Record summary:
Structure probing data (2A3) for a 177-nucleotide construct. Values cover nucleotides 27 to 126. As a SHAPE reagent, 2A3 marks flexible, mostly unpaired nucleotides at the ribose 2'-OH.
[RMDB]
RNA sequence: GGGAACGACUCGAGUAGAGUCGAAAACAGCCCGCCAAGAACCAGGCGGUGACCAACGUCGAUCGCACCGUGCGCUCGGUCAAGCGACACAUGGGCAGCGACUGGUCCAUAGAGAUUGACGGCAAGACGUGGAUUAGGCCUUCGGGCCUAAUCCACGAAAAGAAACAACAACAACAAC
Reactivity to 2A3 in 0.01 (KOAc 150mM, MgCl2 10mM, bicine 150mM(pH8.5), 24C), signal-to-noise 1, nucleotides 027 to 126: c030a000g300c000c000c050g040c010c060a100a010g080a000a080c050c060a060g000g000c000g010g000u010g000a090c050c050a080a020c300g230u070c110g020a190u020c240g000c050a090c000c050g000u000g000c010g000c060u170c000g220g000u120c000a000a060g000c090g000a140c000a000c080a000u140g000g000g000c060a020g120c000g000a040c080u090g010g000u050c000c000a140u240a020g020a000g000a010u110u110g010a120c000g000g050c050a050a050g000a020